[RMDB]
Conditions: 150 mM KOAc, 10 mM MgCl2 and 150 mM bicine (pH 8.5), 24 C. This 207-nucleotide RNA was probed chemically with DMS and 2A3. The DMS profile rests on 3,105 reads. For 2A3 the reverse transcriptase was SuperScript II with manganese. For 2A3, 3,037 sequencing reads were counted. DMS adducts were read by reverse transcription with MarathonRT.
RNA sequence: GGGAACGACUCGAGUAGAGUCGAAAAUCAUGUUUCGACAUGAGAAAGCCCGUAGGAAAUGAACUACAACAAACACUGCGAAGAACGUAGUUCGAAAGAGCUACGGGAGCAGUGGUAGUUGCAUUUCCUAAACGGUCACUUUGAGGUUCGCCUCAAAAAUCACCAUAUUCUUCGGAAUAUGGUGAUUAAAAGAAACAACAACAACAAC
Reactivity to DMS in 0.01 (KOAc 150mM, MgCl2 10mM, bicine 150mM(pH8.5), 24C), signal-to-noise 2, nucleotides 027 to 156: u010c000a010u000g010u000u000u010c200g040a110c010a040u030g010a100g000a120a170a230g040c060c000c020g030u000a060g030g000a060a060a040u050g000a170a120c000u000a040c010a090a130c150a090a170a300c010a010c020u000g000c000g010a130a150g000a120a170c020g030u000a000g020u000u010c010g000a210a100a140g020a030g000c020u000a000c010g000g010g010a180g000c000a010g010u000g010g010u000a050g020u010u010g000c010a070u000u000u000c000c000u000a000a060a080c060g030g020u000c040a070c040u000u030u020g010a020g010g020u000u000c250g040c010c000u020c010a000a030a040
Reactivity to 2A3 in 0.01 (KOAc 150mM, MgCl2 10mM, bicine 150mM(pH8.5), 24C), signal-to-noise 4, nucleotides 027 to 156: u010c000a010u020g070u030u150u110c210g120a020c020a020u020g010a020g140a140a050a010g080c010c010c010g020u040a010g000g010a000a010a020u010g000a010a000c000u030a020c020a220a000c030a090a270a000c010a000c000u020g020c010g210a300a000g010a050a020c000g000u000a000g000u000u010c000g010a030a040a050g000a000g000c010u000a000c000g010g000g000a000g000c000a000g000u030g090g000u010a010g000u000u030g030c000a000u010u000u000c000c000u010a050a060a000c050g010g030u110c060a050c190u100u040u060g010a000g000g040u090u120c210g100c060c010u030c020a020a060a000